[RMDB]
Description
Structure probing data (DMS and 2A3) for a 177-nucleotide construct. Values cover nucleotides 27 to 126. DMS adducts were read by reverse transcription with MarathonRT.
RNA sequence: GGGAACGACUCGAGUAGAGUCGAAAAGCCAUGAGUUUCGACUCAUGGCAAAAGCGCGUCAGCGCAACGAUGCAAGCGCAAGCGCGUCCAUCGUAAAUGACAAAAUUCUCGGGUUCGCCCGAGAAAACCGAUCUCUUUAGUUCGCUAAAGAGAUCGGAAAAGAAACAACAACAACAAC
Reactivity to DMS in 0.01 (KOAc 150mM, MgCl2 10mM, bicine 150mM(pH8.5), 24C), signal-to-noise 1, nucleotides 027 to 126: g000c010c000a000u010g010a000g000u000u000u010c070g000a070c000u000c000a010u020g030g060c000a030a010a020a100g000c020g000c020g020u010c130a240g010c010g060c000a010a040c050g000a000u010g000c110a240a290g000c010g000c060a170a270g040c040g000c090g010u000c210c000a040u000c020g030u000a050a080a100u000g000a040c160a090a140a060a070u000u000c000u000c020g000g000g010u000u010c260g000c010c000c000g000a030g000a000a000a100a100
Reactivity to 2A3 in 0.01 (KOAc 150mM, MgCl2 10mM, bicine 150mM(pH8.5), 24C), signal-to-noise 2, nucleotides 027 to 126: g000c000c000a000u010g000a010g000u030u020u220c120g050a030c000u000c000a000u000g010g000c000a000a000a010a010g000c000g000c010g050u070c070a160g210c010g010c030a020a000c010g040a030u090g050c130a090a110g000c010g020c050a140a110g140c060g000c030g090u020c010c000a090u050c010g060u040a050a100a100u100g010a040c040a010a140a020a140u030u000c020u000c000g060g000g000u060u050c210g080c030c000c000g000a010g000a010a000a000a000